The record gives the reactivity of an RNA of 177 nucleotides to 2A3 and DMS. The RNA was probed in 150 mM KOAc, 10 mM MgCl2 and 150 mM bicine (pH 8.5) at 24 C. For DMS, 1,158 sequencing reads were counted. For 2A3, 2,469 sequencing reads were counted. Reactivities are given for positions 27 through 126. For DMS the reverse transcriptase was MarathonRT.
RNA sequence: GGGAACGACUCGAGUAGAGUCGAAAAGUGGAUAGUUUCGACUAUCCACACAACUGAUGAUCUUACACUGGAGGAUGAAGAAGAUGGCCAUCGGAUCCUCAAAUAGCACAGAGUUCGCUCUGUGCAACAUAGUGGCCGUUUUCGAACGGCCACUAUGAAAAGAAACAACAACAACAAC
Reactivity to 2A3 in 0.01 (KOAc 150mM, MgCl2 10mM, bicine 150mM(pH8.5), 24C), signal-to-noise 2, nucleotides 027 to 126: g010u000g010g000a000u000a000g010u000u010u110c170g020a000c010u000a000u030c000c000a010c000a000c010a010a010c010u060g020a070u030g000a020u060c020u040u160a070c100a040c090u140g140g020a040g040g020a100u090g070a030a150g020a050a040g040a070u080g080g000c020c000a020u010c010g010g040a020u010c000c020u040c020a050a060a090u100a000g000c000a000c000a000g020a000g000u040u060c120g060c060u000c000u000g000u000g020c000a020a010
Reactivity to DMS in 0.01 (KOAc 150mM, MgCl2 10mM, bicine 150mM(pH8.5), 24C), signal-to-noise 2, nucleotides 027 to 126: g020u020g000g000a010u000a000g010u010u000u020c150g010a040c010u000a000u000c000c000a020c020a020c130a050a070c050u000g000a040u010g010a080u000c020u010u000a100c220a120c070u020g000g040a060g010g000a070u010g010a080a120g000a040a110g000a040u000g010g000c060c020a050u010c040g010g000a080u000c010c030u010c220a030a030a080u020a120g000c000a020c000a020g000a030g010u000u000c280g010c010u000c000u000g010u010g010c000a040a050